[RMDB]
RNA sequence: GGGAACGACUCGAGUAGAGUCGAAAAGAUAUGGAAUUCCAGGUCGAAGAACUUUGCUCCCCACCUCGGAAACGAGAGGCAAAGGGAGACCGGAAUUCCUAAGUCAAAACUUCCCUUCGGGGAAGAACAGACUUAAGGUGUUCGCACCUUAAGUCUGAAAAGAAACAACAACAACAAC
Reactivity to 2A3 in 0.01 (KOAc 150mM, MgCl2 10mM, bicine 150mM(pH8.5), 24C), signal-to-noise 1, nucleotides 027 to 126: g010a020u020a030u090g000g020a000a030u040u090c150c170a300g040g050u010c020g200a300a000g000a020a020c010u040u010u010g010c000u070c030c070c030c040a300c090c010u000c000g030g000a000a000a010c010g000a020g050a030g050g080c000a000a000a000g040g020g000a040g000a000c000c000g000g010a000a000u010u010c000c000u000a020a000g010u010c010a000a030a190a270c000u000u000c020c000c000u000u040c270g140g000g000g000a000a000g010a090a030
Reactivity to DMS in 0.01 (KOAc 150mM, MgCl2 10mM, bicine 150mM(pH8.5), 24C), signal-to-noise 1, nucleotides 027 to 126: g000a010u000a080u010g010g000a040a010u000u000c000c010a180g070g010u000c000g020a130a130g000a130a210c010u010u000u000g000c010u000c040c000c020c070a300c220c010u020c020g000g000a050a010a030c000g040a020g000a240g030g010c000a010a000a000g020g000g020a070g010a000c000c000g020g000a000a000u000u000c000c000u000a000a030g010u030c010a060a070a180a190c040u000u000c000c000c000u000u020c130g000g010g020g000a030a050g010a040a190